[RMDB]
The record gives the reactivity of an RNA of 177 nucleotides to DMS and 2A3.
DMS adducts were read by reverse transcription with MarathonRT.
For 2A3 the reverse transcriptase was SuperScript II with manganese.
The reactions ran in a buffer of 150 mM KOAc, 10 mM MgCl2 and 150 mM bicine (pH 8.5), at 24 C.
Source: RMDB libraries RFM100 and RFMREP, as collected in RNAgym.

RNA sequence: GGGAACGACUCGAGUAGAGUCGAAAACCUUACAAUGUCGAGUAAACGAAGCAUCUGUCCCCUGGUAUUGUCUUCGAGCUUGGUGUUUUUUUCUAGCCAACUCCAAGUUCUCGAGUUGAUCAUUGUUCUAAUGACAACUGUUCGCAGUUGUCAUUAGAAAAGAAACAACAACAACAAC
Reactivity to DMS in 0.01 (KOAc 150mM, MgCl2 10mM, bicine 150mM(pH8.5), 24C), signal-to-noise 2, nucleotides 027 to 126: c000c020u020u020a090c100a020a030u020g010u000c040g010a070g010u010a090a090a100c040g010a060a070g000c030a030u000c020u000g000u020c000c000c020c030u000g010g000u000a070u010u000g010u020c060u020u000c010g000a030g020c030u000u000g020g010u000g000u000u000u060u020u000u020u020c120u000a110g010c140c180a030a040c000u010c000c010a030a020g010u020u020c010u000c020g010a050g010u000u000g020a140u000c090a080u000u040g000u000u040
Reactivity to 2A3 in 0.01 (KOAc 150mM, MgCl2 10mM, bicine 150mM(pH8.5), 24C), signal-to-noise 5, nucleotides 027 to 126: c000c000u030u040a120c090a060a080u130g070u090c010g030a020g030u140a050a140a040c020g010a020a000g010c020a050u010c030u100g080u110c000c010c000c000u020g030g030u140a100u110u120g050u020c010u020u020c030g010a010g000c000u000u000g000g040u020g040u050u040u010u010u010u040u080c090u060a070g030c040c020a010a000c000u000c000c010a020a000g000u150u040c000u000c010g020a030g010u000u050g040a070u080c040a090u020u120g040u120u010